[RMDB]
RNA sequence: GGGAACGACUCGAGUAGAGUCGAAAAUGUAGCCGUUGCAGUCGUAGCAGGUGAGCGGCUCAACGAUGUCGGCGGGAUCGAACAUGGUGGUGGUCCUUCCUGUUGGGGCGGGUCUGUCCCGCCUGACACGUCGUCCUGAGUUCGCUCAGGACGACGUAAAAGAAACAACAACAACAAC
Reactivity to 2A3 in 0.01 (KOAc 150mM, MgCl2 10mM, bicine 150mM(pH8.5), 24C), signal-to-noise 1, nucleotides 027 to 126: u160g020u090a000g110c060c000g000u000u070g070c070a040g050u080c020g060u040a040g100c050a040g000g230u080g040a030g000c020g040g000c010u020c010a040a030c050g070a080u070g040u050c010g020g030c030g000g020g020a000u040c050g100a060a080c070a060u040g070g010u080g060g000u030g000g000u050c000c000u070u070c060c010u050g070u050u140g040g000g000g030c080g030g000g020u000c140u150g120u100c020c020c010g000c000c000u000g000a000c000
Reactivity to DMS in 0.01 (KOAc 150mM, MgCl2 10mM, bicine 150mM(pH8.5), 24C), signal-to-noise 1, nucleotides 027 to 126: u000g040u000a090g030c030c010g020u000u030g030c120a030g000u000c070g000u000a110g030c060a100g020g000u000g020a060g010c000g000g000c010u000c050a080a040c040g000a110u000g000u000c030g020g010c020g000g000g000a030u000c230g000a060a060c090a070u000g000g020u000g010g030u000g010g010u000c030c020u010u000c010c010u010g000u000u000g000g000g000g000c060g010g030g000u000c180u000g000u010c010c010c000g010c000c000u000g000a010c010